[RMDB]
RNA sequence: GGGAACGACUCGAGUAGAGUCGAAAACGGUCUGCAGGCUCUUCAUAGCCACGGACCUUGGUAGAGAGAAUGCGGAAACUGAUUUCGCACGCGUGUGCGCGAACCGCGGUGUAGGUACGGCAGCUUAUGACGUUACCGACGCUCUUGUUGCCGUUACAACAGUUAUUGAGUUCGCUCAAUAACUGUUAAAAGAAACAACAACAACAAC
Reactivity to 2A3 in 0.01 (KOAc 150mM, MgCl2 10mM, bicine 150mM(pH8.5), 24C), signal-to-noise 4, nucleotides 027 to 156: c020g000g020u010c010u000g090c100a230g010g020c040u050c050u260u240c130a140u230a140g000c020c010a010c000g000g000a000c000c000u000u060g030g000u050a020g000a000g000a010g030a140a110u180g000c010g000g040a120a060a020c100u120g090a190u080u120u060c020g000c000a020c020g120c070g070u220g020u050g070c050g000c040g020a040a060c000c010g000c010g010g020u070g010u030a070g010g090u020a000c000g000g000c020a030g000c040u170u110a130u300g010a020c000g040u070u110a080c020c050g000a010c010g010c030u010c000u010u020g010u020u080g000c000c010g070u110u070a030c010
Reactivity to DMS in 0.01 (KOAc 150mM, MgCl2 10mM, bicine 150mM(pH8.5), 24C), signal-to-noise 3, nucleotides 027 to 156: c110g000g020u010c000u000g020c040a130g050g020c000u000c120u040u000c210a140u000a070g000c000c000a120c020g010g030a040c010c000u020u000g010g010u000a100g000a130g000a100g000a090a070u000g030c000g010g000a040a080a270c130u020g010a210u010u000u000c020g030c000a020c030g010c170g020u000g030u000g040c040g020c040g000a060a060c040c090g030c020g030g020u000g020u000a050g010g020u000a040c010g000g000c030a070g020c160u000u010a100u000g010a030c020g010u010u000a040c110c050g010a100c030g000c040u010c090u000u000g020u000u010g010c000c020g010u010u000a050c050

An RNA of 207 nucleotides, treated with 2A3 and DMS and read out base by base. Reactivities are given for positions 27 through 156. It was measured as part of the RMDB library OK3TST.